RNA sequence: GGGAACGACUCGAGUAGAGUCGAAAAACGCAUCAUACGUGAUGCGAGAACUACAGUUCCGCUCCUCUAGCACACAGAGGUCAAUUGGGUGCGACCCCCCCCUGUCCCGUGGGUCAACGGGAACCAAAAAAGACCCUUUAGUUCGCUAAAGGGUCAAGCUAUACACAUAGUUCGCUAUGUGUAUAGCAAAAGAAACAACAACAACAAC
Reactivity to 2A3 in 0.01 (KOAc 150mM, MgCl2 10mM, bicine 150mM(pH8.5), 24C), signal-to-noise 3, nucleotides 027 to 156: a000c000g010c000a010u000c000a000u050a100c220g090u080g030a030u030g000c030g000a060g010a020a020c080u220a130c050a100g000u000u010c000c010g040c080u070c000c000u020c020u050a070g030c030a010c010a000c010a030g010a010g040g030u040c040a010a080u090u060g080g000g000u040g020c040g200a300c000c000c000c000c000c000c000c000u020g070u000c010c000c000g000u010g000g000g020u070c050a000a000c000g000g000g010a000a000c000c010a000a000a070a040a010a000g020a010c000c000c010u000u000u000a030g000u090u050c190g030c170u010a000a000a000g000g010g000u000c000a000a000
Reactivity to DMS in 0.01 (KOAc 150mM, MgCl2 10mM, bicine 150mM(pH8.5), 24C), signal-to-noise 1, nucleotides 027 to 156: a190c000g040c000a020u000c030a080u020a060c270g050u020g040a010u030g000c000g010a070g000a060a040c040u000a110c070a090g000u000u010c020c010g050c040u000c010c010u010c100u010a120g010c020a110c070a060c070a010g030a050g020g000u010c070a090a190u030u010g020g000g040u000g020c070g040a300c010c000c000c040c020c050c010c030u010g010u000c000c000c010g020u010g030g040g000u010c050a060a050c050g050g000g000a040a020c100c040a020a030a060a050a130a090g000a030c000c000c010u010u010u030a010g010u000u010c300g040c010u010a000a000a000g000g010g000u000c000a010a010